Description
An RNA of 177 nucleotides, treated with DMS and 2A3 and read out base by base. The DMS profile rests on 3,754 reads. The RNA was probed in 150 mM KOAc, 10 mM MgCl2 and 150 mM bicine (pH 8.5) at 24 C. It was measured as part of the RMDB library M2PK90. Reactivities are rounded to 0.1 and cut off at 0 and 3.
RNA sequence: GGGAACGACUCGAGUAGAGUCGAAAAUAUUACGCUGCAGCUUGGGAGGCGGCUCUCCCCAGGCGGCGACCGCGGAGACACCCAUCCGUGAACCCCAGGUCCCGGGCCGCCGGCUCGCCGCGAUAAAACCAUAGUGGAUAUUCGUAUCCACUAUGGUAAAAGAAACAACAACAACAAC
Reactivity to DMS in 0.01 (KOAc 150mM, MgCl2 10mM, bicine 150mM(pH8.5), 24C), signal-to-noise 4, nucleotides 027 to 126: u000a080u010u010a090c100g000c020u000g020c040a060g010c050u000u010g020g010g010a150g000g000c030g020g000c050u000c050u000c040c000c010c120a110g000g010c020g000g000c030g020a010c060c010g000c010g010g000a120g010a150c140a170c050c060c030a090u000c030c020g020u000g000a090a110c050c010c020c050a160g000g010u010c030c090c050g000g000g000c000c020g000c080c050g010g000c110u000c030g020c000c010g010c010g010a080u000a030a050a070
Reactivity to 2A3 in 0.01 (KOAc 150mM, MgCl2 10mM, bicine 150mM(pH8.5), 24C), signal-to-noise 2, nucleotides 027 to 126: u140a030u110u130a070c040g000c000u020g010c020a040g010c020u100u100g070g070g020a040g050g050c050g010g000c000u020c010u020c000c000c000c040a090g010g120c020g010g010c000g030a000c020c000g000c010g020g020a060g040a030c060a090c050c000c020a030u070c020c010g010u010g140a140a150c010c020c010c000a020g040g010u000c000c070c070g030g020g010c000c000g020c030c000g000g000c020u020c040g000c020c010g000c000g010a030u100a060a060a010